[RMDB]
RNA sequence: GGGAACGACUCGAGUAGAGUCGAAAAGAUCAUGAUCAUCGCGAUCCUCAUGCAUGCUAGUCUGUGAUCCAUGCGCGUGCUAGACAUGACAUGCUAGCUAGCAUGCACAUGUAGCACGAUCGAUACAGAUACCCUGUGCUUUCGAGCACAGGGUAUCAAAAGAAACAACAACAACAAC
Reactivity to DMS in 0.01 (KOAc 150mM, MgCl2 10mM, bicine 150mM(pH8.5), 24C), signal-to-noise 4, nucleotides 027 to 126: g010a120u000c090a080u000g010a080u000c050a080u000c090g020c100g010a060u000c110c070u000c100a090u000g000c020a020u000g000c060u000a040g010u000c030u000g010u010g020a110u000c240c030a020u000g010c120g000c010g020u000g010c030u010a090g020a230c010a030u000g000a300c010a000u000g020c020u000a130g010c100u000a050g000c010a000u000g010c020a020c040a040u000g000u010a010g000c090a020c040g000a020u000c130g000a060u010a070c160a070
Reactivity to 2A3 in 0.01 (KOAc 150mM, MgCl2 10mM, bicine 150mM(pH8.5), 24C), signal-to-noise 4, nucleotides 027 to 126: g050a050u110c050a060u130g060a040u060c020a020u120c120g010c060g070a070u050c000c050u060c010a040u120g000c010a000u030g000c000u040a030g070u110c040u050g140u050g070a060u020c000c040a020u050g030c110g000c010g070u010g010c010u040a060g020a110c000a020u010g000a000c010a010u010g010c010u020a040g000c020u050a000g000c000a020u000g060c020a010c000a020u060g050u090a000g000c030a020c050g000a040u030c020g020a010u060a140c070a030
An RNA of 177 nucleotides, treated with DMS and 2A3 and read out base by base. Source: RMDB library OK2TRN, as collected in RNAgym. In probing experiments dimethyl sulfate is read out at A N1 and C N3, which are open when not base-paired.